An RNA of 177 nucleotides, treated with 2A3 and DMS and read out base by base. The DMS profile rests on 1,204 reads.

RNA sequence: GGGAACGACUCGAGUAGAGUCGAAAACACAGAGGCUCCAGCAAGGCACAGAGGCACAGAGCUGAGGUUGACACCCAGCUGGAGAGGCCCUGUACAGGAAAGCCAUGGGUGCGCUGAACUGGUUAGAGCAUACACACUUCUUCGGAAGUGUGUAUGCAAAAGAAACAACAACAACAAC
Reactivity to 2A3 in 0.01 (KOAc 150mM, MgCl2 10mM, bicine 150mM(pH8.5), 24C), signal-to-noise 1, nucleotides 027 to 126: c040a000c000a020g020a070g080g000c020u010c030c000a040g060c040a050a240g070g000c090a030c000a060g060a240g070g000c020a020c020a090g080a010g060c000u030g010a070g110g060u060u060g050a010c010a010c070c000c000a010g000c000u000g010g090a250g020a210g160g000c000c000c000u010g010u060a040c070a040g180g100a160a050a070g000c010c000a030u060g090g030g040u120g000c040g000c040u050g030a090a040c020u060g060g000u090u050a050g020a000
Reactivity to DMS in 0.01 (KOAc 150mM, MgCl2 10mM, bicine 150mM(pH8.5), 24C), signal-to-noise 2, nucleotides 027 to 126: c040a130c090a050g000a160g020g020c020u010c020c030a150g040c060a080a120g040g000c000a030c020a080g010a140g030g020c020a090c090a120g010a050g010c010u000g000a100g010g000u000u030g010a130c150a170c010c000c010a040g010c000u000g060g010a160g000a220g010g010c030c000c010u000g010u000a090c160a060g010g000a090a130a080g020c010c020a100u010g040g000g030u000g010c090g010c020u000g020a130a080c040u000g000g030u020u000a040g000a170

The RNA was probed in 150 mM KOAc, 10 mM MgCl2 and 150 mM bicine (pH 8.5) at 24 C.